[RMDB]
RNA sequence: GGGAACGACUCGAGUAGAGUCGAAAAGAAUUACUAGUACCUUUAGUGAUACUAAAAGUUUUGUGCUCAUCUUAGCACCAUGAAUUGCGUCUAUUAGCAUUCACUGAAUGUCACGAUAGAGUUAUCGAAUACUAACACUUUUCGAAGUGUUAGUAUUAAAAGAAACAACAACAACAAC
Reactivity to 2A3 in 0.01 (KOAc 150mM, MgCl2 10mM, bicine 150mM(pH8.5), 24C), signal-to-noise 9, nucleotides 027 to 126: g020a010a050u130u070a050c040u020a020g080u050a040c020c000u080u070u050a120g040u080g050a060u030a080c020u040a010a050a060a100g020u030u070u180u180g020u020g000c020u030c040a260u030c110u130u180a000g000c000a010c010c010a080u150g080a110a080u210u160g050c040g080u030c030u060a110u070u040a060g010c040a020u020u020c070a070c120u050g010a050a030u040g050u070c050a000c100g030a020u050a050g090a010g060u070u050a090u140c040g050
Reactivity to DMS in 0.01 (KOAc 150mM, MgCl2 10mM, bicine 150mM(pH8.5), 24C), signal-to-noise 9, nucleotides 027 to 126: g010a090a050u000u000a100c140u000a110g010u000a020c020c030u000u000u010a090g010u000g010a030u000a050c010u000a010a070a160a090g010u000u000u000u010g020u000g010c030u000c140a070u010c100u000u000a130g010c050a060c110c150a070u000g010a040a060u010u010g020c070g010u010c120u000a110u000u000a090g010c010a020u000u000c000a050c190u000g000a040a040u000g000u000c090a080c120g000a030u000a050g010a100g010u000u000a070u000c090g000